[RMDB]
RNA sequence: GGGAACGACUCGAGUAGAGUCGAAAAAUGCAUGGCUUCCAAGCUACAAAAUGCAUCAAAGAAGCCCGAACCAAGGAAAGCAAUCCACAGAGCAAUUGUCGGAUUAACAGUCUCAGCUAUGGUAUGGCGAAUGGCAAUGAUUCGUCAUUGCCAUUCGAAAAGAAACAACAACAACAAC
Reactivity to 2A3 in 0.01 (KOAc 150mM, MgCl2 10mM, bicine 150mM(pH8.5), 24C), signal-to-noise 2, nucleotides 027 to 126: a000u010g010c000a020u020g010g020c010u130u000c060c040a080a060g000c020u030a050c080a000a120a000a010u070g000c000a020u030c050a010a100a200g070a040a010g120c000c010c050g020a020a010c030c040a010a000g050g020a100a110a000g030c060a000a030u000c010c010a000c000a020g090a070g060c080a110a170u120u060g050u070c110g020g010a000u050u000a000a060c020a050g120u040c020u050c090a050g000c000u030a040u130g000g010u080a100u080g040g030
Reactivity to DMS in 0.01 (KOAc 150mM, MgCl2 10mM, bicine 150mM(pH8.5), 24C), signal-to-noise 3, nucleotides 027 to 126: a030u000g010c010a040u000g010g000c030u000u040c220c290a120a110g000c020u000a080c150a080a070a160a040u000g000c010a020u000c050a080a120a120g020a110a080g010c010c000c020g000a060a100c120c060a070a100g000g010a070a100a080g070c100a050a030u010c030c010a050c050a020g000a120g020c150a120a130u000u010g020u010c100g030g010a060u000u000a040a100c210a040g000u010c030u000c060a060g000c050u000a040u000g010g010u000a040u010g000g010